[RMDB]
RNA sequence: GGGAACGACUCGAGUAGAGUCGAAAAGGUUACUCCAUCCGCCAGCUGUGUCAGGAAAUGCAUGAUCUGUAUGUCAGCCACAAUGUGAAAGAGUUACAGAAAGAGAUGUUCCGUAAGGCGCAUUUCCGUACACAGCGUGAUUCGUCACGCUGUGUACAAAAGAAACAACAACAACAAC
Reactivity to DMS in 0.01 (KOAc 150mM, MgCl2 10mM, bicine 150mM(pH8.5), 24C), signal-to-noise 2, nucleotides 027 to 126: g020g010u000u020a090c070u000c030c070a120u000c070c080g000c040c030a100g030c070u000g020u010g010u000c090a140g010g010a050a060a050u000g010c010a090u000g010a070u000c060u010g010u000a060u000g010u000c020a090g000c160c030a060c060a100a100u000g010u000g040a060a210a080g010a050g010u010u000a030c090a090g000a040a090a080g000a070g000a030u010g010u000u000c000c020g000u010a090a120g000g040c120g000c020a010u000u000u010c010c080
Reactivity to 2A3 in 0.01 (KOAc 150mM, MgCl2 10mM, bicine 150mM(pH8.5), 24C), signal-to-noise 1, nucleotides 027 to 126: g020g010u060u130a110c010u040c020c000a020u000c000c000g000c000c010a040g000c050u080g020u020g040u120c040a040g090g040a060a090a050u050g020c010a040u100g000a100u120c020u000g070u040a000u040g200u060c010a010g010c000c000a050c050a080a200u220g010u020g030a080a070a120g050a010g020u010u050a030c000a020g140a060a120a020g110a000g010a010u100g010u050u050c000c000g020u080a010a110g030g000c010g020c000a000u010u000u050c010c020